[RMDB]
RNA sequence: GGGAACGACUCGAGUAGAGUCGAAAAAGAGGCGAUACGUCGCCUCAAGCUUGGUGCUUAGCUUCUCUCACCAAGCAUAUUACACGCGGAUAACCGCCAAAGGAGAAACACUGACUACGGUCAGUGAGGAAGUUGGUUCGGUUCGCCGAACCAACAACCAACUGCGAAACUUCGGUUUCGCAGUUGGAAAAGAAACAACAACAACAAC
Reactivity to 2A3 in 0.01 (KOAc 150mM, MgCl2 10mM, bicine 150mM(pH8.5), 24C), signal-to-noise 1, nucleotides 027 to 156: a000g000a000g000g010c000g000a000u010a060c180g100u000c000g000c000c000u000c000a000a010g000c000u000u000g000g030u000g000c020u150u120a060g030c030u060u000c040u010c000u010c010a000c000c000a000a000g010c010a000u100a000u090u190a090c050a010c030g020c020g000g010a110u140a300a250c050c040g000c070c050a070a120a040g080g000a000g000a010a070a010c000a010c030u010g010a000c000u030a060c150g060g000u020c020a000g000u010g040a010g000g050a110a070g000u000u000g000g010u000u030c000g000g040u000u010c130g010c060c000g010a000a000c000c000a000a000c000a000a000
Record summary:
This 207-nucleotide RNA was probed chemically with 2A3. The reactions ran in a buffer of 150 mM KOAc, 10 mM MgCl2 and 150 mM bicine (pH 8.5), at 24 C. The data come from the RNA Mapping Database (RMDB), library M2RFPK.